Chemical mapping of a 177-nucleotide RNA with 2A3 and DMS. The reactions ran in a buffer of 150 mM KOAc, 10 mM MgCl2 and 150 mM bicine (pH 8.5), at 24 C. Reactivities are given for positions 27 through 126.

[RMDB]
RNA sequence: GGGAACGACUCGAGUAGAGUCGAAAAGCCGCGGUCGUAGUGUGAGACUCCGACACCUGAUCCGCCAGCGCAGAGAUGUGAGAUCAACGGACGGAAGGCGACGGUGCCCGGCGCGCGCGAGUUGACGAGAAAUUGUACAGUUCGCUGUACAAUUUCUAAAAGAAACAACAACAACAAC
Reactivity to 2A3 in 0.01 (KOAc 150mM, MgCl2 10mM, bicine 150mM(pH8.5), 24C), signal-to-noise 6, nucleotides 027 to 126: g040c020c010g010c050g060g030u030c010g010u040a080g000u020g070u060g140a080g060a030c010u030c050c000g020a020c020a020c020c020u030g010a070u020c000c010g020c010c020a050g020c040g020c050a010g020a010g020a120u090g070u040g070a110g020a120u070c020a040a050c050g030g050a020c000g010g040a030a020g030g000c020g010a020c010g030g050u070g030c020c010c000g020g010c020g000c000g010c000g000c000g000a050g020u050u080g060a060c080g020
Reactivity to DMS in 0.01 (KOAc 150mM, MgCl2 10mM, bicine 150mM(pH8.5), 24C), signal-to-noise 4, nucleotides 027 to 126: g010c010c020g030c060g020g000u000c020g020u000a040g010u010g000u030g000a130g020a110c020u000c010c020g010a090c040a150c050c020u000g000a150u020c030c010g000c020c040a100g010c030g000c040a090g000a130g010a090u010g010u000g010a090g020a090u000c100a100a130c060g000g020a060c040g000g010a100a080g000g000c040g000a110c030g010g010u010g000c030c030c010g000g010c040g010c020g000c020g000c030g000a090g010u010u010g010a090c140g020
For 2A3, 5,742 sequencing reads were counted. For DMS, 9,622 sequencing reads were counted.